[RMDB]
RNA sequence: GGGAACGACUCGAGUAGAGUCGAAAAAGCUGGGAGUACUACGGUACUACCAGCAUAAUUCGUGGUUCGAAAACCUCCCACGCAAAAAAACUAAGGAAAAACGCCGAGUAGUACGCUACUCGGCGAAGGUACCGGAAUCAGUUCGCUGAUUCCGGAAGAAGAAUUAAGAGUUCGCUCUUAAUUCUUCAAAAGAAACAACAACAACAAC
Reactivity to 2A3 in 0.01 (KOAc 150mM, MgCl2 10mM, bicine 150mM(pH8.5), 24C), signal-to-noise 1, nucleotides 027 to 156: a000g000c000u020g020g020g000a020g000u010a010c000u020a040c150g090g000u000a010c000u000a000c020c000a000g000c010a010u070a010a080u060u100c030g000u020g030g040u110u140c090g020a040a120a160a220c010c010u000c000c020c000a020c020g100c080a010a050a010a050a090a050a060c100u230a070a160g010g120a110a060a000a060a020c000g000c000c020g000a000g000u000a000g000u010a030c120g030c080u010a020c000u000c030g010g000c000g000a000a000g010g000u020a020c020c010g010g010a000a000u000c000a000g050u050u100c150g010c050u000g000a000u000u000c010c010g000g000a000a000